[RMDB]
RNA sequence: GGGAACGACUCGAGUAGAGUCGAAAAACAUUGUUUUGUACAAGUGUAAACACAUCUUCUUCUGAAGCUUUUCUAAUUGGUGUUAACUACCUUGGUGAUUUUAGUGACAAACCUAUUAUUGAUGGUGUACUUAUGCCUAAUUCGUUAGGCAUAAGUAAAAAGAAACAACAACAACAAC
Reactivity to 2A3 in 0.01 (KOAc 150mM, MgCl2 10mM, bicine 150mM(pH8.5), 24C), signal-to-noise 6, nucleotides 027 to 126: a010c040a020u080u110g050u090u110u090u190g070u060a040c030a080a080g030u020g050u170a080a130a010c020a000c000a050u000c010u080u000c000u130u050c060u130g050a070a050g040c070u150u160u120u010c050u070a080a090u070u090g040g000u020g030u060u030a060a030c030u020a020c020c000u040u060g070g020u100g100a110u040u050u080u180a060g010u060g030a020c050a030a110a030c020c010u030a060u200u050a100u080u120g070a060u110g020g050u070g010
Reactivity to DMS in 0.01 (KOAc 150mM, MgCl2 10mM, bicine 150mM(pH8.5), 24C), signal-to-noise 9, nucleotides 027 to 126: a080c060a100u000u000g000u000u000u000u000g020u010a090c060a050a060g010u000g010u000a040a080a090c100a030c040a040u010c020u000u000c050u000u000c160u000g000a070a070g010c200u000u000u000u000c060u010a060a070u000u000g010g020u000g010u000u000a070a080c100u010a040c050c020u000u000g010g010u000g000a070u000u000u000u000a060g010u000g010a090c140a070a080a070c040c010u000a050u000u000a100u010u000g010a090u000g010g010u000g020